[RMDB]
RNA sequence: GGGAACGACUCGAGUAGAGUCGAAAAAAAUUGCUACACAAUUUACAAGCAGACAUUUGCUACAAGUUCGUCCUUUGGGAUUAUGAACGUAGCAAUAUUUAUGGUACUGCUACUAUUGGUGUAUGUAUGAUCCUAUAGUUCGCUAUAGGAAAAAGAAACAACAACAACAAC
Reactivity to 2A3 in 0.01 (KOAc 150mM, MgCl2 10mM, bicine 150mM(pH8.5), 24C), signal-to-noise 9, nucleotides 027 to 129: a000a000a000u170u040g000c000u010a000c020a000c000a020a020u030u050u150a120c100a100a000g000c000a000g020a020c010a020u020u010u010g000c000u000a000c010a170a140g000u000u000c000g000u000c010c000u080u130u270g150g010g000a010u060u050a100u300g000a000a000c000g000u000a000g000c000a000a010u080a050u020u170u040a100u080g070g010u090a160c000u000g010c000u020a020c030u020a030u020u030g180g000u020g020u010a020u190g020u000a040u090g050a030
Reactivity to DMS in 0.01 (KOAc 150mM, MgCl2 10mM, bicine 150mM(pH8.5), 24C), signal-to-noise 9, nucleotides 027 to 129: a020a010a040u050u010g010c010u000a020c020a020c010a030a000u010u020u030a090c240a110a020g000c010a030g000a070c020a020u000u000u000g000c010u010a020c030a080a130g010u010u020c020g000u000c010c030u020u060u080g010g020g020a020u020u040a050u050g010a020a020c030g000u040a020g000c010a000a000u060a040u020u030u050a070u000g030g030u000a080c000u010g020c000u010a080c160u020a050u000u000g030g030u030g020u010a000u070g010u020a040u020g010a100